[RMDB]
RNA sequence: GGGAACGACUCGAGUAGAGUCGAAAAAUUGUAGUUUCCAGGACGCUGCCUCUAAUAUCUUUGUUAUUAACAAGGACACUUAUGCAGCUCUUAGAAACUCUUUAACUAAUGAUGCCUAUUCACGAUUACAGAUCAGUCUUCGGACUGAUCAAAAGAAACAACAACAACAAC
Reactivity to DMS in 0.01 (KOAc 150mM, MgCl2 10mM, bicine 150mM(pH8.5), 24C), signal-to-noise 5, nucleotides 027 to 129: a040u000u000g040u000a040g050u000u010u060c010c070a030g020g020a000c190g040c020u020g020c030c030u000c000u010a040a030u020a070u040c000u000u000u000g010u000u000a210u000u090a080a010c030a000a090g000g000a000c050a000c300u050u000a000u050g020c000a000g020c020u020c000u000u000a100g010a020a020a000c030u050c030u030u020u010a070a090c100u050a060a110u040g040a090u060g020c000c010u020a100u000u070c110a030c190g020a090u060u070a060c000a090
Reactivity to 2A3 in 0.01 (KOAc 150mM, MgCl2 10mM, bicine 150mM(pH8.5), 24C), signal-to-noise 9, nucleotides 027 to 129: a000u090u090g040u100a000g000u000u000u000c000c010a000g020g010a020c140g000c010u010g000c010c000u010c000u000a010a020u020a020u030c000u030u000u010g040u030u100a300u230u240a140a000c000a000a000g010g000a000c020a020c090u010u010a010u140g000c000a000g010c000u000c000u000u010a000g000a000a000a000c000u000c000u040u060u030a100a070c070u060a090a100u150g100a050u120g060c010c020u070a140u130u140c120a080c130g120a070u050u220a100c050a060
Chemical mapping of a 170-nucleotide RNA with DMS and 2A3. Source: RMDB library 15KLIB, as collected in RNAgym. For 2A3 the reverse transcriptase was SuperScript II with manganese. Conditions: 150 mM KOAc, 10 mM MgCl2 and 150 mM bicine (pH 8.5), 24 C.